RNA sequence: GGGAACGACUCGAGUAGAGUCGAAAAAGCUAGUAUUACGAUACUAGCAAGAGAAGCAAAGUGAUGAGUAAUACUGGCUGGAGCCCCAAAGAGGCACGUGUGUGUGUUUGUGUGUGUGUGUAUAUGCUUGUCAGUGCAUGCACGUGUAUGUCUGGGAGUACAAAUGGGUGCGACUGGUUGUAGGGAACUAGCUAUGUGCCUUCUAUUAGGCCAUGACAGUCAAACUGAUAAGAUCUGAUUGCUUCACGGUAUGGUACGCCAUACCGACCUUUUGUUUCGACAAAAGGAAAAGAAACAACAACAACAAC
Reactivity to DMS in 0.01 (KOAc 150mM, MgCl2 10mM, bicine 150mM(pH8.5), 24C), signal-to-noise 9, nucleotides 027 to 266: a040g010c010u000a010g010u000a000u000u000a030c030g010a170u010a030c010u000a240g000c010a070a080g020a160g020a120a110g010c020a060a090a100g010u010g010a100u010g010a290g010u000a030a020u010a020c020u000g000g000c010u000g010g010a210g020c100c010c010c130a060a120a090g010a090g010g000c040a010c020g010u000g010u000g020u000g020u000g000u000u010u010g010u010g020u010g010u010g010u000g010u010g030u010a080u010a050u010g010c010u000u010g010u010c020a020g010u010g010c010a010u000g010c000a010c040g010u000g010u000a050u020g010u010c030u000g000g000g010a110g010u010a060c120a060a090a100u010g010g010g000u000g010c160g010a070c090u000g000g010u010u010g010u010a060g010g000g010a080a060c040u000a060g010c060u010a030u000g010u010g010c010c000u000u000c300u020a130u010u010a040g010g000c010c020a010u010g000a060c050a040g000u000c060a040a110a080c020u000g000a050u010a050a080g010a100u010c090u010g000a140u000u000g000c040u000u000c030a130c000g010g000u000a010u000g000g010u000a100c230g020c000c000a010u000a010c000c000g010a080
Reactivity to 2A3 in 0.01 (KOAc 150mM, MgCl2 10mM, bicine 150mM(pH8.5), 24C), signal-to-noise 9, nucleotides 027 to 266: a000g000c010u000a000g000u000a000u010u020a020c050g020a010u010a050c010u020a000g000c000a010a000g030a010g030a160a040g020c070a110a120a050g060u140g140a280u080g030a080g020u020a020a030u020a040c010u010g010g000c010u010g000g020a030g070c010c000c000c010a050a160a040g100a060g060g010c010a010c020g020u020g000u000g010u010g010u010g040u060u140u080g100u070g040u030g020u020g020u010g010u000g080u020a120u090a070u300g040c040u110u130g130u220c030a030g020u020g060c000a000u010g000c000a000c020g010u030g000u010a080u100g090u000c020u030g020g010g020a080g040u070a060c050a050a160a100u170g050g010g010u030g020c030g050a030c040u040g050g060u080u080g040u070a060g010g030g030a030a030c020u020a050g030c030u050a040u110g060u130g000c020c000u030u090c020u080a270u300u140a050g020g000c010c010a030u070g040a020c010a010g020u040c030a020a040a030c020u010g020a040u040a120a040g040a050u030c050u120g050a230u040u110g030c030u060u060c050a030c070g000g000u010a010u000g000g010u040a040c250g040c030c000a000u000a000c000c000g010a020